[RMDB]
RNA sequence: GGGAACGACUCGAGUAGAGUCGAAAAUUGAUCUCCUCUAUCUGUACUAUCUAGAGAUUGUACUUCUUUCAGUUCUGGAUAAUAUAUACGUUGAUAGAUUAGCUGAGCUAUUCUAUCUCCAGUAUUUACAUUAAACGUACAUUUUCCAUUAUUAAUAGAGGUCUCUAGUAUUCGUACUAGAGACCUCAAAAGAAACAACAACAACAAC
Reactivity to 2A3 in 0.01 (KOAc 150mM, MgCl2 10mM, bicine 150mM(pH8.5), 24C), signal-to-noise 1, nucleotides 027 to 156: u070u140g020a030u020c060u030c040c050u020c080u110a090u080c100u050g000u000a000c000u020a020u040c030u030a030g000a020g000a110u010u020g020u020a060c030u140u080c010u030u090u010c060a060g010u030u010c000u160g000g020a010u000a170a000u050a110u010a000u000a080c010g010u000u000g010a000u000a000g000a000u000u010a010g030c150u290g180a000g060c000u000a000u000u000c000u000a000u010c010u020c000c000a020g020u000a000u000u170u040a060c050a010u080u170a120a110a040c070g010u050a040c020a030u060u030u040u120c040c010a060u110u190a150u100u090a230a090u190a120
Conditions: 150 mM KOAc, 10 mM MgCl2 and 150 mM bicine (pH 8.5), 24 C. This 207-nucleotide RNA was probed chemically with 2A3. The 2A3 profile rests on 501 reads.